[RMDB]
RNA sequence: GGGAACGACUCGAGUAGAGUCGAAAACUGCAGGUGGGACAAGACGGAGCCUCAGGUUUGCCUGCAGAGGCCUAGUCCCAGGCUUUGGCCUUCCCAUAUCUGCUUUGAGGUAGUGAGGAGGGACCUGUAACAUCUACGAGUUCGCUCGUAGAUGUUAAAAAGAAACAACAACAACAAC
Reactivity to DMS in 0.01 (KOAc 150mM, MgCl2 10mM, bicine 150mM(pH8.5), 24C), signal-to-noise 4, nucleotides 027 to 126: c030u010g010c010a000g000g020u000g020g020g000a040c090a090a050g020a070c090g020g010a100g010c040c050u000c110a120g030g010u000u010u000g010c010c000u000g000c050a020g000a080g000g000c000c040u000a130g010u000c000c010c050a170g000g000c020u010u000u000g010g000c010c010u020u000c000c000c010a120u010a060u010c010u000g010c110u000u010u000g010a060g010g020u000a020g020u000g010a130g010g010a060g010g000g010a080c040c030u010g010
Reactivity to 2A3 in 0.01 (KOAc 150mM, MgCl2 10mM, bicine 150mM(pH8.5), 24C), signal-to-noise 2, nucleotides 027 to 126: c010u010g010c000a000g000g040u180g080g070g020a010c040a060a090g070a020c130g140g070a050g070c030c020u050c040a030g000g090u030u060u040g030c000c000u000g000c010a020g030a050g040g020c000c000u040a030g010u000c030c010c000a010g040g010c000u140u090u070g030g020c000c000u000u040c000c000c000a010u040a010u090c020u040g160c040u080u100u220g150a080g050g010u040a030g110u020g100a100g000g020a030g040g000g070a150c000c020u050g040
Structure probing data (DMS and 2A3) for a 177-nucleotide construct. For 2A3, 2,383 sequencing reads were counted. The reactions ran in a buffer of 150 mM KOAc, 10 mM MgCl2 and 150 mM bicine (pH 8.5), at 24 C. In probing experiments dimethyl sulfate is read out at A N1 and C N3, which are open when not base-paired.